[RMDB]
RNA sequence: GGGAACGACUCGAGUAGAGUCGAAAACCUUCUCGCCCCGUUAUGGGUUCGAGUCGCACGGAAGCCUUAGCACUAUGUGCAUUGUAUUUUAAUACGCUGCACCCGUGCUAGUGCCAAUGAUGAUGUCAUUGGUGCGACGUCAUCAAACUGCGGGAAAUCAGAAGUAUUUCUUCGGAAAUACUUCUGAAAAAGAAACAACAACAACAAC
Reactivity to DMS in 0.01 (KOAc 150mM, MgCl2 10mM, bicine 150mM(pH8.5), 24C), signal-to-noise 2, nucleotides 027 to 156: c010c030u000u000c020u010c040g020c260c010c000c030g000u010u000a100u000g030g000g020u010u000c040g000a210g020u010c010g010c000a030c020g020g000a100a130g040c030c020u000u000a030g020c000a010c000u010a100u000g010u000g000c000a030u010u000g030u000a010u000u000u000u000a110a130u010a030c010g020c070u020g020c010a000c010c130c270g000u000g040c000u000a030g010u010g010c010c000a020a040u000g030a020u000g000a130u000g010u010c010a060u010u010g000g030u010g020c000g010a030c000g030u010c030a070u000c050a160a040a070c020u000g010c060g030g020g000a070a090a190
Reactivity to 2A3 in 0.01 (KOAc 150mM, MgCl2 10mM, bicine 150mM(pH8.5), 24C), signal-to-noise 5, nucleotides 027 to 156: c000c000u020u020c030u000c020g020c000c040c020c030g070u130u170a160u300g050g000g000u070u100c060g000a000g000u000c000g000c000a010c020g100g300a130a030g000c010c030u040u050a000g010c020a010c010u080a070u300g000u000g000c000a000u000u040g000u010a020u010u190u030u130a200a060u010a000c010g000c020u000g000c000a010c000c030c030g000u000g000c000u000a000g010u020g030c000c010a010a000u000g000a000u030g050a080u290g070u050c010a010u000u020g030g000u020g010c000g000a000c000g140u050c000a000u010c010a040a120a070c040u080g010c010g000g010g000a020a030a040

Conditions: 150 mM KOAc, 10 mM MgCl2 and 150 mM bicine (pH 8.5), 24 C. This 207-nucleotide RNA was probed chemically with DMS and 2A3. DMS adducts were read by reverse transcription with MarathonRT. The DMS profile rests on 3,918 reads. The 2A3 profile rests on 5,185 reads. Source: RMDB library RSTRND, as collected in RNAgym. For 2A3 the reverse transcriptase was SuperScript II with manganese.